Structure probing data (2A3 and DMS) for a 207-nucleotide construct. The reactions ran in a buffer of 150 mM KOAc, 10 mM MgCl2 and 150 mM bicine (pH 8.5), at 24 C.

RNA sequence: GGGAACGACUCGAGUAGAGUCGAAAAUUCAUCGUGUCUCCGUCUGCAGUUGGCGUUAAUGUAGGCUGGGGCUACUGCCGCAUAUGCUGCCAAGAGACAGAGGGGCUGCUUCACAUAUGAGCUGCUCAGGGUCUCCACCACCUUGUUUUGACGGGCCUGACUGAGAAUGAUUCGUCAUUCUCAGUCAAAAAGAAACAACAACAACAAC
Reactivity to 2A3 in 0.01 (KOAc 150mM, MgCl2 10mM, bicine 150mM(pH8.5), 24C), signal-to-noise 4, nucleotides 027 to 156: u120u050c020a040u050c090g040u020g070u050c020u040c030c030g080u020c010u040g030c040a120g010u070u060g060g000c030g030u050u100a120a040u110g030u040a130g020g050c060u060g030g000g000g020c030u070a090c020u050g010c040c010g000c030a040u050a050u210g030c040u080g000c010c010a060a010g030a010g000a030c020a040g110a100g020g020g000g000c020u050g030c000u100u150c050a080c070a110u240a160u290g010a010g020c020u030g000c000u020c030a020g090g000g000u000c010u010c010c010a040c010c000a030c020c000u010u020g050u010u120u040u080g020a040c000g020g060g000c010c030
Reactivity to DMS in 0.01 (KOAc 150mM, MgCl2 10mM, bicine 150mM(pH8.5), 24C), signal-to-noise 2, nucleotides 027 to 156: u000u020c060a070u000c010g010u000g010u000c010u000c010c020g040u020c040u000g010c030a270g030u000u010g030g010c010g010u000u000a060a060u000g030u010a030g040g000c020u000g020g010g020g050c030u000a060c030u000g010c100c010g000c020a080u000a090u010g010c030u000g050c030c060a080a100g010a090g020a180c020a070g010a140g000g030g040g010c000u000g000c030u000u000c080a250c110a160u000a120u000g010a060g010c000u010g020c000u000c030a090g020g020g010u000c050u010c030c000a130c020c020a050c040c040u000u010g000u000u010u000u010g000a080c100g070g000g000c050c050
DMS adducts were read by reverse transcription with MarathonRT.